[RMDB]
RNA sequence: GGGAACGACUCGAGUAGAGUCGAAAACGGCGUCAACGAUGAAGCAGGCCGCCAUAACGCUCUGAUCGACGAGCUGGCCACUGUGGUCAUCAAAAAAAUAGCUGAGUGCCGCUCCGUUGACCAAGUCAAGUACGAGGAUGUUCGCAUCCUCGUACUUAAAAGAAACAACAACAACAAC
Reactivity to 2A3 in 0.01 (KOAc 150mM, MgCl2 10mM, bicine 150mM(pH8.5), 24C), signal-to-noise 4, nucleotides 027 to 126: c050g070g020c060g010u010c020a020a020c010g070a060u150g080a050a000g040c130a150g040g050c050c010g010c000c000a060u130a150a030c080g020c010u000c000u060g260a240u280c080g090a070c020g000a040g000c020u020g040g000c000c010a060c090u190g040u070g150g120u040c030a060u000c030a010a030a020a000a000a040a150u200a010g020c080u070g050a030g080u140g030c020c010g010c010u020c020c020g010u010u010g040a030c010c000a040a000g080u110c060
Reactivity to DMS in 0.01 (KOAc 150mM, MgCl2 10mM, bicine 150mM(pH8.5), 24C), signal-to-noise 2, nucleotides 027 to 126: c100g000g000c090g000u000c050a000a030c050g000a010u010g040a050a190g020c000a060g010g000c270c160g000c060c040a060u040a150a120c110g000c030u040c040u000g010a180u000c220g000a160c090g000a020g000c010u000g000g030c030c170a300c060u000g020u000g020g000u000c010a000u020c050a000a000a060a110a060a060a040u050a090g000c090u040g000a010g010u040g000c000c000g000c050u040c060c010g000u000u040g010a050c050c010a120a020g000u000c070